[RMDB]
RNA sequence: GGGAACGACUCGAGUAGAGUCGAAAAGCUACCACUGCUGUAGGUAGUUGUAUAAAGAGUGUAGUGCGGCAUCUAGGUGUUACUAAAGGCAUAUUGACAGGCUGUUUUAGUUUUGCCAAGAUGUUAUAAACCUUCUGCUUCGGCAGAAGGAAAAGAAACAACAACAACAAC
Reactivity to 2A3 in 0.01 (KOAc 150mM, MgCl2 10mM, bicine 150mM(pH8.5), 24C), signal-to-noise 5, nucleotides 027 to 129: g000c010u020a000c010c010a050c030u140g110c060u150g090u080a060g020g010u000a010g010u030u100g120u000a170u080a020a140a010g210a000g030u100g000u110a060g050u110g090c040g030g000c000a010u010c010u020a040g000g010u010g010u080u000a000c000u020a050a010a000g050g020c020a030u120a070u140u120g110a040c040a070g060g000c040u020g130u080u030u020u050a000g000u020u000u030u060g000c000c000a020a000g020a020u050g020u070u020a000u140a060a070a040
Reactivity to DMS in 0.01 (KOAc 150mM, MgCl2 10mM, bicine 150mM(pH8.5), 24C), signal-to-noise 7, nucleotides 027 to 129: g030c030u000a050c010c000a080c060u050g050c180u000g000u050a080g040g030u010a020g010u010u000g020u040a050u020a040a030a020g020a040g020u000g020u010a030g030u050g050c130g000g000c000a030u000c030u020a080g020g030u020g030u060u030a030c050u020a000a020a020g020g030c030a060u040a190u020u070g000a090c220a110g000g000c000u020g020u000u000u000u000a030g020u010u010u030u020g020c040c020a070a060g030a000u020g000u020u040a060u000a010a070a120